[RMDB]
RNA sequence: GGGAACGACUCGAGUAGAGUCGAAAAGCGGUGUUCGCACCGCGGGCCGUAGGAUGCCUCCCCACCGAAAUGGUAGCGAAGAACGAGCCUUCGAAAGAGGGCUCGGGAGCUAUCCAUUUCGAGGGCAUCCUAAACGGAAAUCCAGCCUUCGGGCUGGCAAACACACUCCUUUCGAGGAGUGUGUUUGAAAAGAAACAACAACAACAAC
Reactivity to DMS in 0.01 (KOAc 150mM, MgCl2 10mM, bicine 150mM(pH8.5), 24C), signal-to-noise 1, nucleotides 027 to 156: g040c000g000g020u000g020u000u010c260g060c030a010c000c000g000c000g020g000g050c010c020g080u010a100g000g000a040u000g010c020c020u000c220c090c040c020a300c240c000g000a020a010a040u000g000g020u000a000g000c040g000a150a200g000a180a210c000g020a040g000c000c000u000u020c010g000a230a150a300g020a030g040g020g030c000u000c000g010g020g010a240g000c000u000a000u000c010c000a010u000u000u000c000g000a300g010g020g030c040a030u000c000c000u020a010a060a070c040g000g010a080a100a130u000c040c000a040g000c010c000u000u050c300g050g060g020c000u000g000g000
Reactivity to 2A3 in 0.01 (KOAc 150mM, MgCl2 10mM, bicine 150mM(pH8.5), 24C), signal-to-noise 2, nucleotides 027 to 156: g010c000g000g000u030g030u060u220c270g020c140a010c010c000g000c030g000g060g030c020c000g000u010a010g000g010a000u010g000c000c000u130c060c050c010c040a030c010c000g000a000a000a000u010g000g000u000a000g000c010g110a300a010g000a030a000c000g000a000g020c000c000u000u000c000g020a050a030a030g000a000g000g000g000c020u000c020g000g000g000a020g000c000u050a050u300c020c000a000u000u000u000c000g000a000g000g000g000c000a010u000c010c000u000a080a080a000c000g000g020a010a040a020u040c030c000a000g000c000c000u050u120c210g090g000g030c000u000g010g000